[RMDB]
RNA sequence: GGGAACGACUCGAGUAGAGUCGAAAAACGGUCGUACGCGACCGAGGCGCGGCUAGGUCGACGGACCGAACAAUGGCAUCCCGCAUUCAGCCAUCCGCCGCGCAGCUUCUUCUCAAACGGUGCGGAAAAAAGUAGGACACCUUCGGGUGUCCUACAAUCUUUGUGGAAUGUUCGCAUUCCACAAAGAAAAAGAAACAACAACAACAAC
Reactivity to 2A3 in 0.01 (KOAc 150mM, MgCl2 10mM, bicine 150mM(pH8.5), 24C), signal-to-noise 2, nucleotides 027 to 156: a010c000g000g000u000c000g010u030a030c220g000c000g170a000c000c000g010a050g000g000c000g000c000g000g020c000u010a020g000g010u010c040g110a200c240g200g000a000c010c000g000a000a000c010a000a020u010g000g000c000a060u120c030c030c000g010c010a020u200u200c050a000g000c000c000a010u010c010c040g000c000c000g000c000g000c010a000g000c010u110u070c000u050u010c030u000c030a080a060a020c020g030g000u000g000c000g000g000a080a000a000a040a000a010g000u010a000g000g000a000c000a000c000c000u010u060c130g030g030g010u000g010u000c000c000u000a000c000a000a000
Reactivity to DMS in 0.01 (KOAc 150mM, MgCl2 10mM, bicine 150mM(pH8.5), 24C), signal-to-noise 1, nucleotides 027 to 156: a140c040g020g000u020c000g000u000a060c200g010c030g000a040c000c000g040a040g030g020c030g030c010g040g030c000u000a100g010g000u010c000g000a180c240g030g020a040c010c000g000a120a040c300a120a030u010g000g000c010a300u010c020c010c050g020c050a080u000u000c060a100g050c000c000a070u020c000c060g020c000c000g000c000g060c000a010g000c030u000u010c060u000u000c030u010c060a160a060a100c090g000g070u000g030c000g010g010a010a020a050a150a100a180g000u000a010g040g000a040c010a000c000c010u000u010c300g010g020g040u000g000u000c010c010u010a000c000a020a020